[RMDB]
RNA sequence: GGGAACGACUCGAGUAGAGUCGAAAAUUACCGCCCAGGAUGGGGUGCAGCGUUCCUGCCAUAUCCAGGGCACCUAGGUGCAGCCUUGUAGUUUUAGUGGACUUUAGGCUAAAGAAUUUCACUAGCAAAAAUCUUUAAGGGUUCGCCCUUAAAGAAACAUUUGAUUAUGCUUCGGCAUAAUCAAAUGAAAAGAAACAACAACAACAAC
Reactivity to 2A3 in 0.01 (KOAc 150mM, MgCl2 10mM, bicine 150mM(pH8.5), 24C), signal-to-noise 1, nucleotides 027 to 156: u060u000a060c030c000g000c000c020c000a000g000g000a000u040g010g000g040g130u190g030c020a010g020c000g060u170u160c000c000u000g000c000c010a000u010a000u090c000c010a020g000g010g000c010a020c000c030u070a060g100g000u130g090c040a000g000c020c000u070u040g130u200a040g020u010u030u060u010a020g010u040g030g000a000c020u100u050u050a020g000g050c000u130a180a120a020g060a070a140u130u280u250c010a010c010u010a010g040c090a020a080a040a120a130u040c000u020u000u010a000a000g060g000g010u000u070c160g130c000c020c020u000u020a000a000a000g000a020a000a000
Structure probing data (2A3) for a 207-nucleotide construct. The data come from the RNA Mapping Database (RMDB), library M2RFPK.